[RMDB]
RNA sequence: GGGAACGACUCGAGUAGAGUCGAAAAUUUCUCCUAUUCGUAGGAGAAAGAAGGACCAGCCGGGAGGGUUAAGGCCAUACGGACAGCCGGGUCCACUGCCGAUAAGGGCUGAGUUCGCUCAGCCCAACGAUCAUUCAGCAUUCGUGCUGAAUGAUCGAAAAGAAACAACAACAACAAC
Reactivity to DMS in 0.01 (KOAc 150mM, MgCl2 10mM, bicine 150mM(pH8.5), 24C), signal-to-noise 2, nucleotides 027 to 126: u000u000u000c000u000c000c000u000a020u000u020c160g040u000a000g010g010a000g000a000a000a020g030a130a160g000g000a110c060c030a130g000c030c040g010g020g000a020g000g000g020u000u000a090a110g000g010c030c030a140u010a130c050g010g010a060c050a070g020c020c030g010g000g000u010c030c040a070c150u000g000c030c010g000a300u010a090a100g010g030g010c000u000g000a010g000u000u010c190g000c000u000c010a000g020c000c000c000a000a010
Reactivity to 2A3 in 0.01 (KOAc 150mM, MgCl2 10mM, bicine 150mM(pH8.5), 24C), signal-to-noise 2, nucleotides 027 to 126: u000u010u000c000u000c000c000u030a000u020u070c240g090u030a000g000g000a010g020a010a010a010g010a020a100g020g010a000c030c010a020g060c030c000g040g050g070a130g060g030g000u100u120a100a040g110g000c020c000a070u090a110c030g010g010a000c010a020g050c020c010g080g000g000u000c000c020a020c050u040g020c020c000g010a040u120a170a190g000g010g000c000u000g010a010g000u020u160c280g010c070u020c010a000g000c000c040c000a020a000
Structure probing data (DMS and 2A3) for a 177-nucleotide construct. Values are in units of 0.01, from 0 to 300, in steps of 10. DMS adducts were read by reverse transcription with MarathonRT. For 2A3, 1,846 sequencing reads were counted. The RNA was probed in 150 mM KOAc, 10 mM MgCl2 and 150 mM bicine (pH 8.5) at 24 C.